[RMDB]
RNA sequence: GGGAACGACUCGAGUAGAGUCGAAAACUUGGAGCUCAAACGGAGGAUAGAAUCCAGGCUAUGAGACGUCUCCUCCCGCUCUGCGUGUUGCCGGUGAUCCUCUUCAUUACCUGGAGUAUGGGGGCUCUCUGUCUUCGAAAUUCGUUUCGAAGACAGAAAAAGAAACAACAACAACAAC
Reactivity to 2A3 in 0.01 (KOAc 150mM, MgCl2 10mM, bicine 150mM(pH8.5), 24C), signal-to-noise 2, nucleotides 027 to 126: c010u050u090g030g000a030g030c040u050c100a130a050a040c130g020g010a020g060g000a050u020a120g090a030a050u110c040c040a020g080g000c040u090a120u190g090a060g020a020c050g070u000c040u040c080c020u020c030c020c010g000c010u090c060u090g020c020g050u210g170u190u150g000c040c050g020g020u030g040a020u040c000c020u040c000u160u050c040a080u070u060a040c030c000u030g070g020a030g030u090a030u080g070g020g040g000g000c000u010c000
Reactivity to DMS in 0.01 (KOAc 150mM, MgCl2 10mM, bicine 150mM(pH8.5), 24C), signal-to-noise 3, nucleotides 027 to 126: c050u010u010g030g000a050g020c060u000c050a060a110a170c160g000g000a030g010g010a070u000a080g020a120a160u000c000c010a070g020g000c050u000a080u010g000a050g010a080c180g010u020c080u010c030c010u000c020c040c070g010c050u000c060u010g030c100g010u000g000u010u010g010c060c040g000g010u000g010a060u010c030c010u010c020u010u000c030a040u000u000a060c030c020u000g010g000a090g000u010a060u010g010g000g010g000g010c080u000c040